[RMDB]
RNA sequence: GGGAACGACUCGAGUAGAGUCGAAAAGAUAUGGACCGUCGCUCAACAGCUAUGACAUCGGAAACGAUGUAUAGACAUGAAAAGUCGGUCCUAAGUCAAAAUCGACGAUACUUCGGUAUCGUCGAAACAAGGAGAUGAUCUUCGGAUCAUCUCCUUGAAAAGAAACAACAACAACAAC
Reactivity to 2A3 in 0.01 (KOAc 150mM, MgCl2 10mM, bicine 150mM(pH8.5), 24C), signal-to-noise 3, nucleotides 027 to 126: g000a000u020a000u050g000g010a000c010c000g000u040c030g020c090u090c070a180a230c070a260g000c000u020a010u060g260a060c000a010u010c010g020g000a010a020a010c010g000a000u000g070u020a000u000a000g000a030c160a300u280g030a000a030a000a060g020u030c010g000g000u000c010c010u000a030a000g020u020c020a000a000a000a300u060c000g000a000c000g000a000u000a010c000u010u070c250g030g010u000a000u000c000g000u010c000g010a010a000a000
Reactivity to DMS in 0.01 (KOAc 150mM, MgCl2 10mM, bicine 150mM(pH8.5), 24C), signal-to-noise 3, nucleotides 027 to 126: g000a030u000a080u000g000g000a010c000c000g020u000c030g000c240u010c100a060a090c120a170g010c010u000a000u000g000a020c010a000u010c010g020g010a040a030a080c000g020a020u000g010u000a010u000a010g010a060c090a070u020g010a050a110a100a100g010u000c000g010g000u000c000c000u000a010a090g000u000c010a080a040a140a160u000c010g010a010c010g000a010u000a000c000u000u020c210g000g000u000a000u000c010g010u000c000g000a010a020a100